Structure probing data (DMS) for a 177-nucleotide construct.
RNA sequence: GGGAACGACUCGAGUAGAGUCGAAAACCCGUUUUGUUCGCAAAACGGGACUCAUCUUAGCUUGGCAGCAUAGCAGGUGUUGGCUGGACUGCUGGCUUAUCCUUGGAGGCAGUUUCGACUGCCUCAAUUCAUUGCUCCACUUCGGUGGAGCAAUGAAAAAAGAAACAACAACAACAAC
Reactivity to DMS in 0.01 (KOAc 150mM, MgCl2 10mM, bicine 150mM(pH8.5), 24C), signal-to-noise 1, nucleotides 027 to 126: c000c000c000g010u000u000u000u000g000u010u030c160g000c000a000a000a000a030c000g010g020g000a050c080u000c150a100u020c130u000u000a010g000c030u000u020g010g000c030a020g000c110a160u010a050g000c010a130g010g010u000g020u010u010g010g010c000u000g000g010a150c000u000g000c000u010g000g000c010u000u000a080u000c060c050u000u010g000g010a020g000g010c000a000g010u010u010u030c190g020a030c000u000g000c000c000u000c000a000a050